[RMDB]
RNA sequence: GGGAACGACUCGAGUAGAGUCGAAAAGAAGGCACUUUCGAGUGCCUUCAUGGGGAGCUCAGCUCUCCCUCCCUUGCAAACUCCCUAAGGGAGGAGACCUAAUUAGGUGCACUUUCGAGUGCACCAAGAGAAUCCCUAAGUUCGCUUAGGGAUUCUCAAAAGAAACAACAACAACAAC
Reactivity to DMS in 0.01 (KOAc 150mM, MgCl2 10mM, bicine 150mM(pH8.5), 24C), signal-to-noise 2, nucleotides 027 to 126: g000a010a000g000g000c000a000c000u010u010u000c180g000a000g060u000g000c000c000u010u000c000a010u000g010g000g010g000a020g010c010u030c200a160g010c030u010c000u010c010c000c040u000c000c000c000u020u000g020c190a060a070a210c140u000c020c040c040u010a040a050g000g000g010a020g020g000a120g000a110c090c080u010a070a090u020u010a070g000g020u000g020c000a020c010u000u020u000c170g020a000g010u000g000c000a020c000c000a040a040
Reactivity to 2A3 in 0.01 (KOAc 150mM, MgCl2 10mM, bicine 150mM(pH8.5), 24C), signal-to-noise 3, nucleotides 027 to 126: g000a000a010g020g020c020a000c020u030u060u160c230g080a000g000u000g000c000c000u000u010c000a000u000g000g010g000g010a000g000c040u040c300a060g020c010u000c050u010c050c000c010u020c010c000c000u000u020g050c090a200a130a170c030u110c050c020c000u100a040a060g010g000g010a000g020g000a040g040a010c010c020u100a150a130u120u180a110g000g000u000g000c000a000c010u090u060u070c220g080a000g000u010g010c010a010c000c000a000a000